Description:
Structure probing data (2A3 and DMS) for a 177-nucleotide construct. For DMS, 2,346 sequencing reads were counted. 2A3 adducts were read by reverse transcription with SuperScript II with manganese. Reactivities are given for positions 27 through 126. Conditions: 150 mM KOAc, 10 mM MgCl2 and 150 mM bicine (pH 8.5), 24 C. For 2A3, 1,786 sequencing reads were counted.
RNA sequence: GGGAACGACUCGAGUAGAGUCGAAAAAGGUUAAAGUGACUUUAAGAGUAGACGAUGAACUAUACAAGUUCUUCAUGGAGAAUGAUGUUGACUUGGAUAGGGUCAUGCAGUUAUUCAUGAACCAGAACACGUCAGUCGUAUUCGUACGACUGACGUGAAAAGAAACAACAACAACAAC
Reactivity to 2A3 in 0.01 (KOAc 150mM, MgCl2 10mM, bicine 150mM(pH8.5), 24C), signal-to-noise 2, nucleotides 027 to 126: a010g130g010u110u020a070a120a050g100u070g060a010c020u040u090u140a150a040g050a020g050u100a040g030a090c000g020a010u010g010a010a010c000u010a010u010a030c020a020a000g010u030u060c000u000u010c010a000u000g100g080a260g120a160a070u110g020a020u050g030u110u060g020a020c000u000u040g050g000a010u030a010g100g000g020u010c000a010u030g070c060a020g000u040u020a020u040u040c030a040u050g010a000a020c000c010a030g050a060a020
Reactivity to DMS in 0.01 (KOAc 150mM, MgCl2 10mM, bicine 150mM(pH8.5), 24C), signal-to-noise 2, nucleotides 027 to 126: a020g000g010u000u010a050a140a140g020u010g000a050c040u010u010u000a130a150g000a040g010u000a030g010a060c030g000a100u000g010a040a030c000u000a030u000a030c020a030a020g000u000u010c020u000u000c000a000u000g010g030a140g030a170a030u000g000a030u000g000u030u010g000a010c000u000u000g010g000a030u010a040g000g020g020u010c000a020u000g020c080a110g000u000u000a030u000u000c020a110u000g000a080a160c030c010a150g000a090a180